RNA sequence: GGGAACGACUCGAGUAGAGUCGAAAAGUGGGUACUAAGGAUUCUGAAACGAUGUGAGAAGGGUGAAAGGGUCAGCCUGAGUCAUGACAACCAUGAUGAGAGGAUGGCUGAGACACAGGAACUGAUGGAGAAACUGUGUUUUCGAACACAGUUUCUCAAAAGAAACAACAACAACAAC
Reactivity to DMS in 0.01 (KOAc 150mM, MgCl2 10mM, bicine 150mM(pH8.5), 24C), signal-to-noise 4, nucleotides 027 to 126: g020u010g000g000g000u000a120c080u040a060a040g010g000a110u010u000c060u000g010a080a130a120c090g000a040u000g000u000g020a090g030a110a070g040g000g040u040g020a070a050a110g000g000g000u000c010a030g020c010c010u000g000a300g000u010c000a010u000g000a210c230a120a180c230c010a020u000g020a020u010g000a210g000a100g000g000a060u000g000g000c000u000g010a090g000a040c100a110c080a040g000g020a090a090c040u000g010a140u040g000
Reactivity to 2A3 in 0.01 (KOAc 150mM, MgCl2 10mM, bicine 150mM(pH8.5), 24C), signal-to-noise 4, nucleotides 027 to 126: g080u090g010g040g040u080a030c030u120a110a130g090g020a110u090u080c060u050g060a070a110a030c090g060a090u060g150u160g040a150g020a040a120g060g000g060u110g070a140a040a040g040g010g000u000c020a010g020c000c010u020g040a000g000u000c000a010u020g060a140c040a070a040c100c000a000u020g010a010u080g010a050g000a000g200g030a000u030g000g000c010u010g040a010g030a040c140a000c000a030g040g030a090a090c080u090g010a100u170g220